[RMDB]
Structure probing data (2A3) for a 207-nucleotide construct. The 2A3 profile rests on 330 reads. It was measured as part of the RMDB library OK3TST.

RNA sequence: GGGAACGACUCGAGUAGAGUCGAAAAGUUUAGUUCUAAUUCUUACUUUUAUUGGGAGUGUUUAGUUCUAAUCCUCACUUUUACUGUGAGUCCAGUGUCUAUGGGGUCAUCUUUUAUUAUGUUCACUAUCUUGAGAAUAUGCUAUCUUUUAUCUCCCACGGGGUGAGAAAUUCGUUUCUCACCCCGUAAAAGAAACAACAACAACAAC
Reactivity to 2A3 in 0.01 (KOAc 150mM, MgCl2 10mM, bicine 150mM(pH8.5), 24C), signal-to-noise 1, nucleotides 027 to 156: g010u020u070u180a010g010u000u040c010u030a040a150u050u100c030u130u110a170c060u200u210u240u240a210u240u220g050g070g070a070g010u030g040u200u070u120a010g010u000u090c010u110a020a020u000c000c000u040c000a020c020u000u110u000u290a040c060u090g020u000g070a030g020u000c040c000a070g030u010g040u010c070u070a100u100g000g000g010g040u000c060a030u030c060u000u240u030u120a210u160u040a100u130g060u080u000c010a000c070u010a130u030c030u050u080g010a030g020a090a000u030a030u160g000c000u000a030u020c000u000u100u000u030a030u100c170u000c000c040c060